RNA sequence: GGGAACGACUCGAGUAGAGUCGAAAACAAUGGAGGUUCGCCUCCAUUGAAAGCGCAAGCCAUCUCAACUUCAAGCGCAGGGAAAAGAGAAAGAAGGGAUAAAAAGCUACCCGUUCGCGGGUAGCAACUUCAAAUCAAACUUCGGUUUGAUUUGAAGAAAAGAAACAACAACAACAAC
Reactivity to DMS in 0.01 (KOAc 150mM, MgCl2 10mM, bicine 150mM(pH8.5), 24C), signal-to-noise 3, nucleotides 027 to 126: c010a010a010u000g010g010a020g020g010u020u030c180g020c000c010u010c000c010a000u000u020g010a040a070a090g000c040g010c070a070a110g020c070c110a110u010c020u000c060a090a180c060u000u000c130a030a100g000c040g030c020a080g000g000g000a050a040a060a080g000a070g010a070a040a110g000a060a080g000g010g000a110u020a050a060a140a120a100g000c000u010a010c010c000c000g020u010u010c160g030c020g020g000g010u010a000g000c010a010a010
Reactivity to 2A3 in 0.01 (KOAc 150mM, MgCl2 10mM, bicine 150mM(pH8.5), 24C), signal-to-noise 3, nucleotides 027 to 126: c000a020a010u000g000g000a000g040g050u050u060c130g070c040c000u000c000c000a000u000u000g000a010a010a000g020c020g010c020a020a040g040c030c030a060u030c030u000c040a050a140c020u120u070c080a130a080g000c000g000c050a040g030g040g030a010a130a110a090g030a030g040a010a100a010g020a030a020g000g020g020a010u120a140a100a010a010a010g010c010u010a000c020c020c010g020u000u040c240g000c000g020g010g020u000a000g000c000a000a000

The record gives the reactivity of an RNA of 177 nucleotides to DMS and 2A3.